Chemical mapping of a 177-nucleotide RNA with 2A3 and DMS. The reactions ran in a buffer of 150 mM KOAc, 10 mM MgCl2 and 150 mM bicine (pH 8.5), at 24 C.
RNA sequence: GGGAACGACUCGAGUAGAGUCGAAAACGAUUAAGCCAUGCGAGUCGUGAGGGGUUAUGCCCUCGGCGGACUGCUCAGUAACACGUGGAUAACCUGCCCAAGGGUCUGGGAUAACCCCGGGAAACUGUGAAUCCGACGUAUUCGUACGUCGGAUUCAAAAAGAAACAACAACAACAAC
Reactivity to 2A3 in 0.01 (KOAc 150mM, MgCl2 10mM, bicine 150mM(pH8.5), 24C), signal-to-noise 2, nucleotides 027 to 126: c010g010a030u080u110a030a000g110c030c000a080u150g000c010g050a000g040u000c000g020u070g000a080g000g000g040g010u170u070a020u190g130c020c000c000u010c000g020g070c000g040g050a030c030u090g000c050u030c080a020g020u020a010a060c010a020c060g070u040g000g010a000u080a090a050c000c000u040g000c010c000c000a020a020g010g000g000u090c150u220g020g000g000a020u070a040a030c020c000c000c000g000g000g000a110a100a000c080u060g000
Reactivity to DMS in 0.01 (KOAc 150mM, MgCl2 10mM, bicine 150mM(pH8.5), 24C), signal-to-noise 1, nucleotides 027 to 126: c050g000a100u000u040a000a270g000c040c070a050u030g030c030g030a010g000u000c020g000u000g000a070g000g000g000g000u010u050a030u000g010c010c000c120u000c140g020g020c040g000g010a080c020u020g020c110u000c160a040g020u010a230a220c120a200c210g020u000g000g000a050u000a090a150c060c000u040g000c030c020c070a040a100g000g000g020u020c130u020g000g000g000a000u010a050a020c020c000c000c000g000g000g000a000a060a040c170u000g000